[RMDB]
RNA sequence: GGGAACGACUCGAGUAGAGUCGAAAAAAUUUGCUUAAUUUGCUCAUUUGUUCAUUUAUUGUUGGUCAUCCCCCUUCCAAUUUCCAAAGAGUAAGCUUCCAGAACAGAGAGCUUUGUCUUGUUCAAUACUGCAUUCUCACAGUCUUUACCAGUGCCAACCCACUAUUUACUUCGGUAAAUAGUGGGUAAAAGAAACAACAACAACAAC
Reactivity to DMS in 0.01 (KOAc 150mM, MgCl2 10mM, bicine 150mM(pH8.5), 24C), signal-to-noise 1, nucleotides 027 to 156: a050a040u010u030u000g020c020u000u010a050a110u000u000u000g060c000u020c050a140u020u010u000g000u000u000c060a140u010u010u000a090u010u000g040u000u000g020g000u000c060a140u000c010c010c030c020c020u020u020c020c040a080a060u000u000u000c010c010a120a090a140g010a110g030u000a030a050g000c030u000u010c010c020a160g010a040a090c060a080g000a150g010a030g040c060u010u000u000g030u000c070u000u000g030u020u010c050a050a140u000a090c030u000g020c030a070u010u000c030u000c010a160c040a070g040u000c090u000u000u000a060c060c000a080g010u000g010c070c050a100